[RMDB]
RNA sequence: GGGAACGACUCGAGUAGAGUCGAAAAGAUAUGGAUUCCUCAACCUUGAGUCCUUGUCUCGGAAACGAGACUAGGACAAUGAUGGGUUGAGGGAAUCCUAAGUCAAAACUGCUUCUUCGGAAGCAGACGUAUUAUGCUCCUUCGGGAGCAUAAUACGAAAAGAAACAACAACAACAAC
Reactivity to DMS in 0.01 (KOAc 150mM, MgCl2 10mM, bicine 150mM(pH8.5), 24C), signal-to-noise 3, nucleotides 027 to 126: g000a050u000a300u010g010g010a010u000u000c000c000u000c000a010a010c000c000u000u030g020a300g010u010c000c000u010u020g010u000c000u000c000g010g010a060a060a110c000g020a010g020a010c000u000a000g020g010a010c020a060a030u000g000a100u000g000g010g000u000u000g010a030g010g010g010a010a010u000c000c000u020a030a090g010u000c040a150a050a150a250c040u000g000c000u000u000c000u000u010c240g030g000a010a010g000c010a010g000a080
Reactivity to 2A3 in 0.01 (KOAc 150mM, MgCl2 10mM, bicine 150mM(pH8.5), 24C), signal-to-noise 2, nucleotides 027 to 126: g010a000u040a030u120g000g000a010u010u000c000c000u000c000a000a010c010c010u070u180g140a040g020u010c000c000u020u020g000u020c010u000c020g020g030a070a060a000c010g010a000g010a010c040u040a000g010g010a010c010a010a010u110g020a080u240g000g000g000u010u010g000a060g020g000g000a010a010u010c000c000u000a100a010g040u020c040a020a000a160a210c020u010g000c010u000u010c010u030u070c300g180g000a000a000g020c000a000g010a010